Chemical mapping of a 177-nucleotide RNA with 2A3 and DMS. The 2A3 profile rests on 2,864 reads. Conditions: 150 mM KOAc, 10 mM MgCl2 and 150 mM bicine (pH 8.5), 24 C.
[RMDB]
RNA sequence: GGGAACGACUCGAGUAGAGUCGAAAACUCAAGAUGAGAUGCCCUGUUUGCUAUGAGGCAUGUCUUUGGUGUGAGAACCCCGAUGGGUCUCUCUCCUCAUUAGCCCUGAUCAACAAAGAAAGAAACAUACGAAGGUUCAAUUCGUUGAACCUUCGUAAAAAGAAACAACAACAACAAC
Reactivity to 2A3 in 0.01 (KOAc 150mM, MgCl2 10mM, bicine 150mM(pH8.5), 24C), signal-to-noise 5, nucleotides 027 to 126: c010u010c010a020a030g160a200u250g000a030g000a050u050g010c000c010c000u060g080u030u170u090g090c080u090a070u110g060a150g100g000c040a030u040g110u020c000u070u070u090g100g020u100g020u030g040a050g020a110a080c000c000c000c050g210a260u300g030g020g000u020c030u000c000u000c000u000c050c000u040c030a150u130u150a050g000c000c000c060u040g050a080u070c020a010a160c030a060a260a010g050a060a130a020g130a100a060a020c040a020
Reactivity to DMS in 0.01 (KOAc 150mM, MgCl2 10mM, bicine 150mM(pH8.5), 24C), signal-to-noise 2, nucleotides 027 to 126: c020u000c030a140a070g010a060u040g000a020g010a090u010g000c020c000c000u010g000u010u010u050g010c210u000a000u050g000a140g020g000c100a130u000g020u000c010u000u000u000g000g020u000g000u010g010a010g000a050a060c040c020c010c300g000a120u020g000g000g050u000c050u000c020u020c000u000c000c030u000c020a010u010u020a060g010c000c030c050u020g010a020u030c100a120a040c140a110a090a050g000a040a030a180g000a090a140a010c150a090

Notes:
For 2A3 the reverse transcriptase was SuperScript II with manganese.